[RMDB]
Structure probing data (2A3 and DMS) for a 177-nucleotide construct.
DMS adducts were read by reverse transcription with MarathonRT.
RNA sequence: GGGAACGACUCGAGUAGAGUCGAAAAGUGCAGCAGUUCGCUGCUGCACAAAAGGCAUCGUAUCAUUGCUUCGAAGCCAAACUAGAAACUAGAAAGCACUGAAAAGACACUUCUUCGGAAGUGUCAACUAGACUCCAAAGUUCGCUUUGGAGUCUAGAAAAGAAACAACAACAACAAC
Reactivity to 2A3 in 0.01 (KOAc 150mM, MgCl2 10mM, bicine 150mM(pH8.5), 24C), signal-to-noise 2, nucleotides 027 to 126: g000u000g000c000a000g020c000a000g010u010u130c170g060c140u000g010c000u000g000c010a000c000a010a060a000a000g010g000c000a030u040c030g020u100a010u170c020a010u030u070g020c010u020u020c000g020a050a000g000c000c020a070a060a000c030u100a100g150a100a160a010c020u020a050g120a120a080a000g030c020a000c060u030g030a040a030a040a070g000a020c000a000c000u010u010c010u030u050c200g030g000a000a000g000u000g000u010c000a000a010
Reactivity to DMS in 0.01 (KOAc 150mM, MgCl2 10mM, bicine 150mM(pH8.5), 24C), signal-to-noise 1, nucleotides 027 to 126: g010u000g000c010a000g010c000a010g020u010u020c290g030c010u000g000c010u000g020c010a000c020a000a050a080a120g000g040c000a120u000c010g000u000a060u010c030a020u000u010g010c000u000u000c010g010a010a080g000c040c000a100a050a210c090u000a080g000a110a140a100c090u010a110g000a060a050a050g000c040a020c040u000g000a080a040a190a100g020a020c000a000c010u000u000c000u000u010c130g010g000a010a010g010u000g000u000c020a000a050